[RMDB]
RNA sequence: GGGAACGACUCGAGUAGAGUCGAAAAGCUCGCUAUUCCUCUGAAGUCCUGUGGACUUGGAGUCUGAAAAUUCCUCGAGUGGUAGAGAUGCCUCAGCUAGGAUGACAGCGUGGGGACGGCCGGCGGCGUCCAACAUGGUGUUCGCACCAUGUUGGACAAAAGAAACAACAACAACAAC
Reactivity to 2A3 in 0.01 (KOAc 150mM, MgCl2 10mM, bicine 150mM(pH8.5), 24C), signal-to-noise 2, nucleotides 027 to 126: g010c010u030c030g000c020u070a090u120u070c010c010u040c030u080g120a010a000g000u020c050c090u260g130u300g150g010a010c000u000u030g050g060a070g090u000c050u040g010a040a040a010a040u110u010c000c000u030c020g020a020g020u030g000g030u020a030g010a000g010a150u040g000c010c000u020c030a050g030c020u040a040g000g030a040u030g010a000c010a010g010c010g020u070g020g010g000g000a010c000g000g000c030c020g000g000c020g020g050c050
Reactivity to DMS in 0.01 (KOAc 150mM, MgCl2 10mM, bicine 150mM(pH8.5), 24C), signal-to-noise 3, nucleotides 027 to 126: g010c010u000c300g000c070u000a160u000u000c030c000u000c060u000g010a040a040g000u000c010c010u000g030u010g040g020a030c000u010u000g000g010a070g010u010c030u010g010a030a090a060a230u010u000c020c000u000c080g000a110g020u000g010g010u020a040g000a170g000a190u000g010c010c000u010c020a090g010c090u010a060g010g020a070u000g000a150c050a040g000c060g030u000g020g020g000g020a050c200g010g010c020c060g010g000c030g020g000c180
An RNA of 177 nucleotides, treated with 2A3 and DMS and read out base by base. Values cover nucleotides 27 to 126. Source: RMDB library OK2TRN, as collected in RNAgym. The reactions ran in a buffer of 150 mM KOAc, 10 mM MgCl2 and 150 mM bicine (pH 8.5), at 24 C.